The record gives the reactivity of an RNA of 177 nucleotides to 2A3. The data come from the RNA Mapping Database (RMDB), library OK1LIB. The reactions ran in a buffer of 150 mM KOAc, 10 mM MgCl2 and 150 mM bicine (pH 8.5), at 24 C.
[RMDB]
RNA sequence: GGGAACGACUCGAGUAGAGUCGAAAACGAACACGGAUAAUGAAUCUUGUUACGACUCCCAGGACGAGUCGCUGGCAAUGCGGCUUAGCUCCUCCAGCACGACAAGCACAUCCUCCAUAGUCCUGCGGGCGGACGACCCAUUCGUGGGUCGUCCGCCAAAAGAAACAACAACAACAAC
Reactivity to 2A3 in 0.01 (KOAc 150mM, MgCl2 10mM, bicine 150mM(pH8.5), 24C), signal-to-noise 1, nucleotides 027 to 126: c050g080a060a010c030a020c110g170g050a120u200a190a120u290g170a050a080u000c030u120u090g070u110u220a180c200g040a080c030u000c030c000c000a000g000g000a010c000g030a040g000u000c080g010c000u010g110g060c080a220a180u060g000c000g000g000c060u000u030a050g000c020u010c000c000u000c000c000a010g150c010a000c100g130a000c000a050a000g000c000a000c000a030u130c000c000u000c000c020a000u060a030g020u050c020c020u000g030c040g000